About this RNA:
This 207-nucleotide RNA was probed chemically with 2A3 and DMS. 2A3 adducts were read by reverse transcription with SuperScript II with manganese. It was measured as part of the RMDB library OK3TST. The DMS profile rests on 3,086 reads.
RNA sequence: GGGAACGACUCGAGUAGAGUCGAAAAGAUUAUGGAAGAUUUGAUCCAAGUGAAAUGAGACAGAAUUUCUUCAAACUCCUUCCUAGUUAUUCAGAUUCUAGUCUGUGUAAUAGUGAUCAAUUAUUGUUUAUUCGGAUAGAUAAUGGAGGUAAUUAUGCCACACUCAUUAGUUCGCUAAUGAGUGUGGAAAAGAAACAACAACAACAAC
Reactivity to 2A3 in 0.01 (KOAc 150mM, MgCl2 10mM, bicine 150mM(pH8.5), 24C), signal-to-noise 3, nucleotides 027 to 156: g030a020u200u170a040u290g010g010a020a010g010a050u110u100u110g010a080u020c040c030a080a030g090u050g120a060a040a110u110g000a040g000a040c050a040g120a110a050u170u000u000c020u010u050c020a080a120a120c040u050c010c000u020u000c000c000u060a040g090u010u000a040u040u030c010a000g000a030u200u070c040u110a060g130u010c000u000g040u000g000u030a010a010u030a060g090u090g070a020u080c030a040a070u110u110a040u070u080g030u040u150u070a090u030u110c030g060g010a040u060a110g020a030u040a140a040u100g040g000a040g040g050u030a070a060u070u170a070u290g050
Reactivity to DMS in 0.01 (KOAc 150mM, MgCl2 10mM, bicine 150mM(pH8.5), 24C), signal-to-noise 2, nucleotides 027 to 156: g010a070u000u000a140u020g020g010a080a060g010a200u000u000u000g010a070u010c050c040a110a140g030u030g010a090a090a110u010g010a180g000a290c050a120g040a150a300u000u000u000c030u000u000c020a030a100a070c030u000c060c030u000u010c020c020u010a120g000u000u000a030u000u000c010a100g020a080u020u010c170u000a070g030u000c020u000g010u010g020u000a020a060u010a090g030u000g010a020u000c020a080a090u000u000a040u000u000g020u000u000u000a160u020u010c040g030g000a180u000a060g040a030u000a040a080u000g020g020a050g040g000u000a060a140u010u000a140u000g000
The 2A3 profile rests on 1,149 reads.